An RNA of 177 nucleotides, treated with 2A3 and DMS and read out base by base.
Values cover nucleotides 27 to 126.
For DMS the reverse transcriptase was MarathonRT.
For 2A3, 1,118 sequencing reads were counted.
The reactions ran in a buffer of 150 mM KOAc, 10 mM MgCl2 and 150 mM bicine (pH 8.5), at 24 C.

RNA sequence: GGGAACGACUCGAGUAGAGUCGAAAAAUCCAUAUGAGUACCGAUCGUACGAUCCUAGCAUACGACUGCAGCUAGUACGAUCGCGUACUGAUCGGAUCGGUACCUAGGUACCUAGAUGGUACACUGCAUGCCGAGCAUUUUUCGAAAUGCUCGGCAUAAAAGAAACAACAACAACAAC
Reactivity to 2A3 in 0.01 (KOAc 150mM, MgCl2 10mM, bicine 150mM(pH8.5), 24C), signal-to-noise 1, nucleotides 027 to 126: a000u100c100c000a110u160a000u190g180a020g040u000a010c000c000g000a010u000c040g000u030a000c020g010a020u000c000c040u060a130g000c030a070u120a230c170g150a130c290u030g000c000a000g000c020u010a030g000u000a000c000g000a000u000c010g030c040g000u000a000c000u000g000a030u040c070g000g000a020u000c040g020g040u040a080c010c030u000a050g010g070u010a000c000c010u050a100g100a300u170g030g000u030a010c120a080c060u040g050c040
Reactivity to DMS in 0.01 (KOAc 150mM, MgCl2 10mM, bicine 150mM(pH8.5), 24C), signal-to-noise 2, nucleotides 027 to 126: a040u000c020c000a080u000a050u000g010a000g030u000a010c000c000g000a040u000c000g000u010a040c000g000a140u000c300c040u010a080g070c020a020u030a180c260g000a160c220u000g020c020a040g020c040u000a260g000u000a000c000g000a020u000c050g020c140g000u000a010c030u000g020a030u000c300g010g000a010u000c040g010g000u000a130c040c040u020a070g020g000u000a000c000c000u010a120g010a080u010g000g010u000a010c000a160c070u000g030c230